[RMDB]
RNA sequence: GGGAACGACUCGAGUAGAGUCGAAAAAUGUCUUUCCAAGUGAGCGUAGCCGUUAACGAUGGACCAUUCCAAAAGAAAAGUGUUACACCAAACACAACUAUUGGUGAUCUGAAUAACGACGCAAUAAGCACCUAUUUAAUUUCGAUUAAAUAGGUGCAAAAGAAACAACAACAACAAC
Reactivity to 2A3 in 0.01 (KOAc 150mM, MgCl2 10mM, bicine 150mM(pH8.5), 24C), signal-to-noise 6, nucleotides 027 to 126: a010u100g070u090c040u020u050u000c030c000a080a050g120u070g140a080g020c030g020u050a030g070c050c030g020u020u020a090a050c050g020a060u120g030g030a010c010c010a030u140u050c030c010a050a040a010a030g090a010a110a020a030g010u010g010u030u030a060c080a060c050c020a030a030a000c030a000c010a080a100c030u060a050u070u020g010g000u020g020a060u000c010u060g060a150a040u030a060a000c020g040a010c020g000c050a020a060u160a150a010
Reactivity to DMS in 0.01 (KOAc 150mM, MgCl2 10mM, bicine 150mM(pH8.5), 24C), signal-to-noise 6, nucleotides 027 to 126: a100u010g010u010c060u010u000u000c010c020a150a150g010u010g010a120g020c050g010u000a120g030c100c020g010u000u000a030a080c150g000a100u010g010g000a030c010c020a060u000u000c030c020a010a030a060a050g010a080a110a090a130g010u000g010u010u010a090c240a110c300c150a030a040a020c020a020c020a070a160c060u000a110u000u000g010g010u000g010a040u000c020u000g020a080a040u000a030a030c040g010a050c040g010c150a060a080u000a080a150
Conditions: 150 mM KOAc, 10 mM MgCl2 and 150 mM bicine (pH 8.5), 24 C. Chemical mapping of a 177-nucleotide RNA with 2A3 and DMS. For 2A3 the reverse transcriptase was SuperScript II with manganese. It was measured as part of the RMDB library OK2TST.